RNA sequence: GGGAACGACUCGAGUAGAGUCGAAAAUGGUCUUGGAGUUGUAGCCGACGUGAUAAUCUACGAUGGUAUACUCCGGAAGGGCGACAUUAUCGUCACGGGUGGUCUAGAGGGCCCGGUUAUAACCAGGCACUAAAAUCGCAUUCGUGCGAUUUUAGUGAAAAGAAACAACAACAACAAC
Reactivity to DMS in 0.01 (KOAc 150mM, MgCl2 10mM, bicine 150mM(pH8.5), 24C), signal-to-noise 5, nucleotides 027 to 126: u020g010g010u000c050u030u030g000g000a030g000u000u000g000u010a100g020c010c010g000a060c020g000u020g020a140u040a100a120u030c170u050a040c020g010a090u010g000g010u000a090u030a060c050u000c000c000g000g020a100a100g000g000g020c070g000a050c140a100u020u020a050u000c080g000u020c040a070c050g010g000g020u020g020g000u010c060u030a080g020a110g000g010g000c020c010c060g020g000u000u030a030u040a100a080c020c020a060g000g000
Reactivity to 2A3 in 0.01 (KOAc 150mM, MgCl2 10mM, bicine 150mM(pH8.5), 24C), signal-to-noise 8, nucleotides 027 to 126: u140g050g010u030c040u050u300g020g010a050g020u030u040g050u170a040g020c010c000g060a040c000g030u030g040a130u090a280a070u100c050u100a030c040g050a070u060g010g000u070a030u060a110c020u000c010c000g010g010a040a080g030g000g020c040g020a020c030a100u130u300a140u260c040g020u000c010a020c030g000g020g020u090g010g030u030c060u090a040g020a090g070g010g000c010c000c010g030g010u130u060a150u030a080a010c010c000a010g030g020